[RMDB]
RNA sequence: GGGAACGACUCGAGUAGAGUCGAAAACGUUACCUUUGCUAAACGUGAACGAUAUGCAAGUUGUCUUGGGUUCUCAAGUCAAAUACGUCGAGAAUGUUUUAAUGGACGUCGAUAUUUUAUCAAUGCGCGUUGAUUGUGUAUUCGUACACAAUCAACGAAAAGAAACAACAACAACAAC
Reactivity to DMS in 0.01 (KOAc 150mM, MgCl2 10mM, bicine 150mM(pH8.5), 24C), signal-to-noise 6, nucleotides 027 to 126: c060g000u000u000a100c060c030u000u010u010g020c160u000a040a050a050c050g020u000g010a200a230c070g000a060u010a080u000g030c090a050a100g000u000u000g010u010c010u000u010g000g010g010u010u010c090u000c010a060a070g010u000c030a030a040a060u000a080c040g010u000c040g010a040g010a270a040u000g010u000u000u000u010a030a090u010g000g000a050c010g020u000c060g010a050u000a040u000u000u000u000a050u000c070a080a090u010g020c140g000
Reactivity to 2A3 in 0.01 (KOAc 150mM, MgCl2 10mM, bicine 150mM(pH8.5), 24C), signal-to-noise 4, nucleotides 027 to 126: c010g030u070u080a090c010c000u110u080u160g060c110u130a060a050a020c010g040u000g070a070a010c010g030a030u010a050u180g040c060a080a170g050u040u030g000u000c000u020u050g070g030g060u300u040c130u020c050a000a020g010u000c000a000a050a030u090a050c040g000u000c020g010a020g060a060a020u020g030u030u050u050u090a070a070u080g020g010a010c010g010u010c010g020a010u020a090u160u160u100u050a100u090c070a060a100u180g050c080g000